[RMDB]
RNA sequence: GGGAACGACUCGAGUAGAGUCGAAAACGAUUAAAGCACCAGUUGCUGGUAUUGCUAUGGGCCUUGUUACACGUGAAGAUAGCUAUACGAUUUUAACUGAUAUCCAAGGUAUGGAAGAUGCAUUAGGGAUGGGCAGUAGGUUCGCCUACUGCCCAUCAAAAGAAACAACAACAACAAC
Reactivity to 2A3 in 0.01 (KOAc 150mM, MgCl2 10mM, bicine 150mM(pH8.5), 24C), signal-to-noise 1, nucleotides 027 to 126: c010g020a070u140u300a150a140a000g030c000a040c120c040a030g040u100u220g000c020u030g000g080u170a090u140u110g060c010u050a000u020g170g020g010c010c040u000u110g080u060u040a060c030a080c160g110u060g160a030a130g070a170u070a000g030c000u050a030u000a060c150g050a000u050u160u050u290a120a030c070u000g020a050u030a020u220c000c080a050a010g130g070u140a030u070g060g020a100a020g070a070u080g000c050a050u030u140a020g050g090
Reactivity to DMS in 0.01 (KOAc 150mM, MgCl2 10mM, bicine 150mM(pH8.5), 24C), signal-to-noise 1, nucleotides 027 to 126: c080g000a160u000u010a040a100a060g010c070a040c060c030a030g040u000u000g010c110u000g030g010u010a010u010u000g000c020u000a030u010g030g010g000c020c030u000u010g020u000u000a090c160a150c030g020u000g000a070a100g000a050u000a020g010c020u000a040u000a050c080g000a080u000u000u000u000a010a060c040u000g020a140u000a040u000c050c020a060a110g020g010u020a060u030g010g000a080a070g020a100u000g020c000a050u010u030a150g010g010